An RNA of 177 nucleotides, treated with 2A3 and DMS and read out base by base.
For 2A3, 2,764 sequencing reads were counted.
DMS adducts were read by reverse transcription with MarathonRT.
RNA sequence: GGGAACGACUCGAGUAGAGUCGAAAAGAUAUGGAACGUCAUACUGCGACGAUCGACAUAUCGGAAACGAUAUAAGUCGGGAGCAGUGACGUUCCUAAGUCAAAAGAUUGUCGUUCGCGACAAUCAAUCCGAGAGUGAAGUUCGCUUCACUCUCGGAAAAAGAAACAACAACAACAAC
Reactivity to 2A3 in 0.01 (KOAc 150mM, MgCl2 10mM, bicine 150mM(pH8.5), 24C), signal-to-noise 2, nucleotides 027 to 126: g010a020u020a020u020g010g000a010a010c010g020u030c020a090u110a300c010u050g030c020g300a300c050g000a220u000c000g000a010c000a030u000a000u000c000g000g000a000a000a000c010g010a000u000a010u020a230a120g030u010c010g000g000g000a010g040c000a010g030u000g000a010c010g000u000u020c000c000u000a000a010g000u010c010a000a020a060a220g020a010u020u020g000u010c030g020u070u120c300g000c000g140a000c010a000a010u010c000a000a090
Reactivity to DMS in 0.01 (KOAc 150mM, MgCl2 10mM, bicine 150mM(pH8.5), 24C), signal-to-noise 1, nucleotides 027 to 126: g000a030u000a100u010g010g000a010a010c000g010u010c000a120u000a150c210u010g070c000g000a030c300g000a000u000c010g000a000c020a080u000a000u000c000g020g010a000a000a000c000g020a000u000a010u020a060a180g020u000c030g010g010g000a000g010c020a010g000u000g000a030c000g030u000u000c000c010u000a000a060g000u000c000a050a080a170a090g000a020u000u000g000u000c000g070u000u000c300g020c020g010a010c030a010a000u000c000a120a160